[RMDB]
RNA sequence: GGGAACGACUCGAGUAGAGUCGAAAAGGUGCGGAUAGGCGACGCGGAAGAAAAAUCGAGUAGGGCCCUGGGGAGAGUACACGCGCAAGCGAGAAAUUUAAAGGAAAUUGACGGAAGAACACCACAAUUGACCAUCUGUUUUCGAACAGAUGGUCAAAAAAGAAACAACAACAACAAC
Reactivity to DMS in 0.01 (KOAc 150mM, MgCl2 10mM, bicine 150mM(pH8.5), 24C), signal-to-noise 2, nucleotides 027 to 126: g010g000u020g000c000g010g010a140u000a110g000g050c000g030a020c080g000c040g000g010a040a080g020a070a060a070a090a020u070c040g010a100g000u010a150g050g050g050c120c070c000u000g040g000g020g000a050g010a000g000u030a170c110a040c070g030c020g020c200a060a080g000c060g000a080g020a060a080a040u020u000u030a040a140a090g030g020a040a090a070u090u020g000a040c020g000g000a100a060g000a050a050c040a060c000c040a020c140a010a130